[RMDB]
About this RNA
Structure probing data (2A3) for a 207-nucleotide construct. The 2A3 profile rests on 802 reads. For 2A3 the reverse transcriptase was SuperScript II with manganese.
RNA sequence: GGGAACGACUCGAGUAGAGUCGAAAACAUAUUCAAUGCCUCGACACAAGCUGCGUGAAGAGUUGAAGAACUACUUUGCCAACUUCGAGGACCGAGCGAUUGUCGAUGGGAUGCGUGUGCGCAGCUGGUUCUCUGACUUCAAUGCUGACAAGUUCAAGUAAUUCGAUCGAUUCGUCGAUCGAAUUACAAAAGAAACAACAACAACAAC
Reactivity to 2A3 in 0.01 (KOAc 150mM, MgCl2 10mM, bicine 150mM(pH8.5), 24C), signal-to-noise 2, nucleotides 027 to 156: c020a030u080a150u130u090c020a030a050u120g040c000c000u000c030g010a010c000a000c030a100a030g010c020u060g000c030g070u020g050a000a040g040a000g020u000u060g100a120a080g040a030a010c020u140a110c020u080u070u030g030c000c010a050a030c100u140u110c030g000a020g050g000a010c010c010g040a000g060c040g060a050u090u040g030u060c040g020a090u130g000g000g120a050u160g050c100g080u250g040u080g010c030g020c000a030g030c010u000g000g020u000u000c000u000c000u020g060a060c000u030u050c100a060a110u200g030c020u030g050a080c050a100a040g010u060u080c100a130a000